[RMDB]
RNA sequence: GGGAACGACUCGAGUAGAGUCGAAAAGGCUGGGGAACCUCGGCUGCGCGGGCGCCGUCCGGCGAGCAACCCGUUUGUCCUACGAUUGAGCUACGAUCGUAGGCAUGUCUGAGGUGGCCUCGCGUGACCCGCCUGGCAUGUUCGCAUGCCAGGCGGGAAAAGAAACAACAACAACAAC
Reactivity to 2A3 in 0.01 (KOAc 150mM, MgCl2 10mM, bicine 150mM(pH8.5), 24C), signal-to-noise 1, nucleotides 027 to 126: g100g000c180u160g000g000g000g000a020a040c090c000u020c000g000g000c000u030g000c000g030c030g040g000g040c020g000c000c000g300u300c160c060g050g000c000g000a080g000c040a040a050c000c000c000g000u000u080u050g140u130c010c010u000a000c000g000a000u000u060g060a140g130c050u190a070c030g030a000u000c060g020u000a000g030g000c050a030u000g030u010c000u030g000a010g000g010u020g060g190c000c030u000c000g000c000g000u040g050a070